[RMDB]
RNA sequence: GGGAACGACUCGAGUAGAGUCGAAAACACGACAUCUUCGCAGGGAAGCCUGUGGACCCUCUGCCAGGCUCCACAAGAGGUCAGGACAGUGCAGUGUGUUCACAAGGCCAGUUUCUGAUCGUCCGCAUCGAUAGUUUUACUUCGGUAAAACUAUCGAAAAAGAAACAACAACAACAAC
Reactivity to DMS in 0.01 (KOAc 150mM, MgCl2 10mM, bicine 150mM(pH8.5), 24C), signal-to-noise 3, nucleotides 027 to 126: c080a130c070g010a070c070a070u010c060u000u010c060g040c070a070g010g000g000a130a160g000c020c030u000g000u000g000g000a030c020c030c010u000c020u000g000c040c040a200g040g010c120u000c000c000a050c170a150a130g010a070g000g010u000c080a070g030g010a030c030a080g030u000g020c020a000g010u000g000u000g000u000u010c030a020c000a030a080g020g010c020c060a110g000u010u010u000c000u000g000a110u000c080g030u010c020c060g000c170a150
Reactivity to 2A3 in 0.01 (KOAc 150mM, MgCl2 10mM, bicine 150mM(pH8.5), 24C), signal-to-noise 3, nucleotides 027 to 126: c070a010c020g090a010c020a100u020c040u140u070c070g010c040a030g040g020g070a060a030g010c010c010u010g010u030g010g000a010c030c010c010u040c020u020g000c000c010a070g050g100c160u020c010c000a060c030a040a110g130a050g130g060u160c080a020g010g030a030c030a010g040u050g260c010a000g000u010g000u000g010u100u040c020a000c030a070a120g020g010c000c000a020g000u000u030u020c020u010g050a100u030c040g050u000c040c020g030c050a020